[RMDB]
RNA sequence: GGGAACGACUCGAGUAGAGUCGAAAAAGACCCAUAUGUUAUAACCGGUGCGUCCGGAGCGUACAACGAGACUGACUUUUUGGGAAACUUCCUUAACUUUGUAGACAGGGAUGACGAUGGGCAGAGGCAGGUCUAAUCCGUUCGCGGAUUAGACCUGAAAAGAAACAACAACAACAAC
Reactivity to DMS in 0.01 (KOAc 150mM, MgCl2 10mM, bicine 150mM(pH8.5), 24C), signal-to-noise 2, nucleotides 027 to 126: a040g010a190c040c000c000a100u030a160u000g000u000u030a040u010a070a220c030c000g000g000u000g000c000g030u000c000c000g010g000a100g020c110g020u000a010c060a080a080c130g000a040g000a040c300u000g000a020c020u040u000u000u080u030g000g000g000a080a100a050c150u030u000c030c000u000u010a090a120c150u000u000u000g000u060a040g000a220c110a080g000g000g080a050u000g000a000c090g000a030u010g000g010g030c040a080g010a200g030g010
Reactivity to 2A3 in 0.01 (KOAc 150mM, MgCl2 10mM, bicine 150mM(pH8.5), 24C), signal-to-noise 2, nucleotides 027 to 126: a000g100a000c080c000c000a000u040a080u070g010u030u030a050u010a300a030c000c000g080g000u060g010c040g010u020c020c010g070g010a040g000c000g040u080a030c020a200a010c160g000a000g080a080c000u020g060a040c040u040u150u060u040u080g070g000g000a100a140a000c020u070u090c000c000u060u090a120a190c000u040u080u130g050u020a050g020a110c030a000g000g000g030a050u040g020a020c000g070a030u100g000g000g010c010a000g000a010g020g000
Annotation:
This 177-nucleotide RNA was probed chemically with DMS and 2A3. DMS adducts were read by reverse transcription with MarathonRT. Conditions: 150 mM KOAc, 10 mM MgCl2 and 150 mM bicine (pH 8.5), 24 C. For 2A3 the reverse transcriptase was SuperScript II with manganese. For 2A3, 858 sequencing reads were counted.